Source information: This 177-nucleotide RNA was probed chemically with 2A3 and DMS. Source: RMDB library TTRDEL, as collected in RNAgym. High 2A3 reactivity points to a flexible backbone, as in loops and unpaired stretches. The reactions ran in a buffer of 150 mM KOAc, 10 mM MgCl2 and 150 mM bicine (pH 8.5), at 24 C. 2A3 adducts were read by reverse transcription with SuperScript II with manganese. The 2A3 profile rests on 16,098 reads.
[RMDB]
RNA sequence: GGGAACGACUCGAGUAGAGUCGAAAAGAUAUGGAGCGUCUAAGAGUGAUGACCUCCGAUCGGAAACGAUCGGAGGCAAGCUCUGCGCUCCUAAGUCAAAACUCAAUGACCUUCGGGUCAUUGAGAAGUAGACAAUGAAGUUCGCUUCAUUGUCUACAAAAGAAACAACAACAACAAC
Reactivity to 2A3 in 0.01 (KOAc 150mM, MgCl2 10mM, bicine 150mM(pH8.5), 24C), signal-to-noise 5, nucleotides 027 to 126: g000a000u020a010u090g010g000a010g000c010g030u080c210u300a200a020g020a010g020u060g140a270u250g090a140c000c000u010c000c000g010a010u000c000g000g000a030a020a010c010g010a010u000c020g010g000a000g000g000c010a020a000g000c000u000c000u000g000c000g010c010u000c000c000u000a020a000g000u000c020a020a050a060a180c010u000c000a000a000u000g000a010c010c010u060u080c300g150g000g000u000c000a000u000u010g000a000g000a010a010
Reactivity to DMS in 0.01 (KOAc 150mM, MgCl2 10mM, bicine 150mM(pH8.5), 24C), signal-to-noise 5, nucleotides 027 to 126: g000a020u000a130u010g010g000a010g010c000g000u000c270u010a080a040g010a010g030u000g020a100u020g010a180c020c000u000c000c000g010a000u010c000g010g000a050a030a050c000g010a010u000c000g010g000a010g020g000c000a010a110g000c000u000c000u000g000c020g000c000u000c000c000u000a000a050g000u000c020a100a080a120a190c010u000c000a010a010u000g000a010c000c000u000u010c240g020g010g010u000c000a000u000u000g000a000g010a010a100